Source: RMDB library OK3TST, as collected in RNAgym. Chemical mapping of a 207-nucleotide RNA with 2A3. The reactions ran in a buffer of 150 mM KOAc, 10 mM MgCl2 and 150 mM bicine (pH 8.5), at 24 C. For 2A3, 412 sequencing reads were counted.

RNA sequence: GGGAACGACUCGAGUAGAGUCGAAAACGGAGCUAUACAGUUUGUUAACUAUAGGUUGUUGGUCAUGCAACUUAACUUUUCUGAGCUUCCAUUUGUCUACUUGUAAAAUGAGAUUGAAUGUAUCUAUCAGUAAGUGUUAUCAUGAGGGGUAGAAUAACAACAGACAAACCUUCGGGUUUGUCUGUUGAAAAGAAACAACAACAACAAC
Reactivity to 2A3 in 0.01 (KOAc 150mM, MgCl2 10mM, bicine 150mM(pH8.5), 24C), signal-to-noise 1, nucleotides 027 to 156: c040g030g020a060g100c030u120a100u100a180c040a060g050u040u050u040g040u070u140a060a050c090u120a100u140a230g030g010u030u000g010u000u030g030g070u050c000a010u070g030c030a000a030c000u080u080a020a010c010u000u000u170u000c010u040g090a050g090c060u100u010c040c000a020u000u000u050g040u050c000u060a260c020u050u070g120u280a050a040a070a080u140g020a100g020a090u200u300g020a100a000u030g010u060a050u000c050u030a140u050c010a000g030u010a050a020g060u000g000u060u060a060u070c050a060u030g050a050g060g020g010g010u120a010g060a050a000u170a100a020